[RMDB]
RNA sequence: GGGAACGACUCGAGUAGAGUCGAAAAGAUAUGGAAGCAUAGACCGAUAAGCCUGUCUCGGAAACGAGACAAGGCUUUUGACGGUCCUAUGCUUCCUAAGUCAAAACGGCUAGCUUCGGCUAGCCGACAUGAGGAUUGGGUUCGCCCAAUCCUCAUGAAAAGAAACAACAACAACAAC
Reactivity to DMS in 0.01 (KOAc 150mM, MgCl2 10mM, bicine 150mM(pH8.5), 24C), signal-to-noise 3, nucleotides 027 to 126: g010a030u000a300u010g000g000a020a000g020c000a010u000a010g010a030c000c010g030a150u000a030a020g020c000c000u000g010u000c010u000c010g010g000a070a050a160c000g000a040g000a000c000a020a030g020g000c000u000u000u000u010g030a220c120g010g000u000c150c080u010a000u000g000c000u000u000c000c010u000a010a070g000u000c030a100a060a110a220c010g000g000c010u010a000g010c000u000u010c230g020g010c000u010a010g000c000c000g000a020
Reactivity to 2A3 in 0.01 (KOAc 150mM, MgCl2 10mM, bicine 150mM(pH8.5), 24C), signal-to-noise 1, nucleotides 027 to 126: g010a000u050a010u110g000g010a000a000g000c010a000u010a000g010a000c020c050g150a180u080a300a000g010c020c000u010g000u000c020u010c000g060g000a080a040a040c020g000a000g000a000c030a010a020g000g020c070u020u000u000u020g040a020c050g000g020u000c040c000u000a000u010g000c000u010u000c000c000u000a010a000g030u030c000a010a000a100a260c050g010g000c020u000a000g000c010u080u070c300g120g000c000u010a000g000c030c010g010a000